Structure probing data (2A3) for a 207-nucleotide construct. The data come from the RNA Mapping Database (RMDB), library OK3TST.
RNA sequence: GGGAACGACUCGAGUAGAGUCGAAAAGUAAGUAGAGCAGGAGAGGCCCAAGGACAGAAUGGUGGGGAAGACUUGACAUUUAAGGGGCAGGAAGAACAGCUGGAAGAGAAGCAAUCAGUGGUAAGAGGGGAACCAAGGAAAGCUGUGUUAGCCAAGCGAACGUGUCUUCAUUCGUGAAGACACGUUCAAAAGAAACAACAACAACAAC
Reactivity to 2A3 in 0.01 (KOAc 150mM, MgCl2 10mM, bicine 150mM(pH8.5), 24C), signal-to-noise 1, nucleotides 027 to 156: g050u110a030a030g010u000a040g050a020g000c020a020g000g020a010g010a050g050g000c060c070c060a040a070g000g000a010c060a050g170a160a050u160g000g000u050g010g010g000g020a050a000g020a000c010u000u070g050a060c030a140u180u070u020a030a000g000g030g010g000c020a000g040g010a070a060g050a030a060c030a050g000c020u030g000g070a060a000g040a000g000a060a020g020c000a000a030u030c020a030g010u030g040g040u100a090a060g010a020g060g000g030g020a010a000c030c000a020a020g040g020a070a030a000g010c070u030g020u030g020u080u070a000g020c000c000a020a000g080c030
For 2A3 the reverse transcriptase was SuperScript II with manganese.
Conditions: 150 mM KOAc, 10 mM MgCl2 and 150 mM bicine (pH 8.5), 24 C.